[RMDB]
RNA sequence: GGGAACGACUCGAGUAGAGUCGAAAAAGUCACUGGUCCGACUUACGAGUCGGACCACUGACAUGGCAGCUGGAUCCAGCCAGGCGGUGUAUCGCCAAACCCAGCCAAUCAAUCUACCCACCGGGAAUACAGAAAGCGAACUUCGGUUCGCUUUCAAGUGAUUAUGUUAGUUCGCUAACAUAAUCACAAAAGAAACAACAACAACAAC
Reactivity to DMS in 0.01 (KOAc 150mM, MgCl2 10mM, bicine 150mM(pH8.5), 24C), signal-to-noise 1, nucleotides 027 to 156: a100g010u000c010a020c020u020g040g030u010c030c010g020a000c010u010u010a110c210g040a090g030u010c010g040g020a010c010c000a010c010u000g000a020c000a300u030g010g000c020a090g000c010u020g010g000a080u000c150c070a130g040c050c030a090g010g020c000g000g000u010g000u000a110u000c010g000c000c010a040a050a070c030c010c010a040g000c010c020a110a110u000c080a060a130u010c070u030a160c020c050c040a160c070c010g000g020g000a150a130u000a050c230a140g010a000a030a020g000c000g010a010a020c010u000u010c300g090g000u000u000c000g040c010u000u000u000c000a010a240
Reactivity to 2A3 in 0.01 (KOAc 150mM, MgCl2 10mM, bicine 150mM(pH8.5), 24C), signal-to-noise 4, nucleotides 027 to 156: a000g000u000c000a010c020u010g030g000u000c000c000g020a000c000u070u060a060c300g050a030g000u000c000g010g010a000c000c010a000c000u010g000a000c000a020u000g010g000c020a020g000c000u010g010g010a080u100c100c030a020g010c010c000a010g000g000c000g000g040u200g070u190a140u300c020g010c000c010a010a000a000c000c000c000a000g010c010c000a020a050u130c020a040a030u040c030u140a090c000c010c050a090c050c130g020g010g070a100a040u110a120c050a080g000a020a010a000g010c000g000a000a000c010u030u060c110g050g000u000u000c000g000c000u000u000u000c000a000a000
Record summary:
Chemical mapping of a 207-nucleotide RNA with DMS and 2A3. DMS (dimethyl sulfate) methylates the pairing face of unpaired adenines and cytosines. The RNA was probed in 150 mM KOAc, 10 mM MgCl2 and 150 mM bicine (pH 8.5) at 24 C.